[RMDB]
RNA sequence: GGGAACGACUCGAGUAGAGUCGAAAAUCGCUUCGUCGUCUAUUUAAUAAAACUUAGGAGCAAACCAUAUCCUUUCGAUAUCGAUCAACAUGGUACGACCUAUUCCCGGCGUUUUCCUGAACAAGGACACUUACGGAGUCAACUCGGAUCAAGAGCGAUCUGAUUCGCGAUUCGUCGCGAAUCAGAUAAAAGAAACAACAACAACAAC
Reactivity to 2A3 in 0.01 (KOAc 150mM, MgCl2 10mM, bicine 150mM(pH8.5), 24C), signal-to-noise 1, nucleotides 027 to 156: u130c020g040c020u040u000c000g110u040c040g060u020c040u130a060u110u270u060a170a140u170a000a180a060a050c050u100u110a040g040g060a030g040c000a090a050a000c000c000a000u040a040u050c100c010u160u170u170c010g060a060u010a080u250c050g010a020u000c010a020a080c060a160u040g120g000u020a160c000g050a070c020c020u020a120u050u050c040c050c070g010g020c090g000u000u000u000u180c040c070u040g060a040a060c080a170a030g030g030a030c030a000c000u020u080a000c110g000g000a030g050u030c030a020a100c060u040c090g080g020a090u050c030a060a020g060a000g040c080g030